[RMDB]
RNA sequence: GGGAACGACUCGAGUAGAGUCGAAAAAAUGUGGGAGAACGUCACCGAAGAGCUGAUCCAGCCAUUCAUCAAGUCGAUCACGAAGAUCACCGCGGCGCUGCUGGGCCCGUUGUCGAUCGGAUUCCUCCGAUUUGGGUCAAUUCGUUGACCCAAAUCGAAAAGAAACAACAACAACAAC
Reactivity to DMS in 0.01 (KOAc 150mM, MgCl2 10mM, bicine 150mM(pH8.5), 24C), signal-to-noise 3, nucleotides 027 to 126: a050a070u000g010u000g030g000g010a190g030a080a070c060g010u000c060a050c080c050g000a060a070g000a210g010c060u010g020a120u000c120c050a090g030c030c100a080u010u000c050a090u000c080a130a130g010u000c050g010a110u000c010a100c110g000a110a120g000a050u000c030a040c050c070g000c060g000g010c100g000c040u000g020c140u010g000g000g000c040c010c020g010u010u000g010u000c100g000a040u000c010g000g020a210u000u000c030c000u010c130
Reactivity to 2A3 in 0.01 (KOAc 150mM, MgCl2 10mM, bicine 150mM(pH8.5), 24C), signal-to-noise 1, nucleotides 027 to 126: a000a000u180g010u040g020g050g010a050g020a060a030c050g020u040c080a030c100c010g070a090a070g010a000g110c070u060g030a180u050c020c000a000g090c020c020a040u090u020c000a020u070c020a150a000g110u050c030g030a020u000c020a010c160g030a110a020g020a030u000c000a000c000c040g000c020g030g020c040g010c060u190g010c110u110g090g050g020c000c000c000g040u030u030g010u060c050g020a020u000c010g000g020a050u070u010c000c000u010c030

The data come from the RNA Mapping Database (RMDB), library OK2TRN. Structure probing data (DMS and 2A3) for a 177-nucleotide construct. Conditions: 150 mM KOAc, 10 mM MgCl2 and 150 mM bicine (pH 8.5), 24 C. The 2A3 profile rests on 1,320 reads.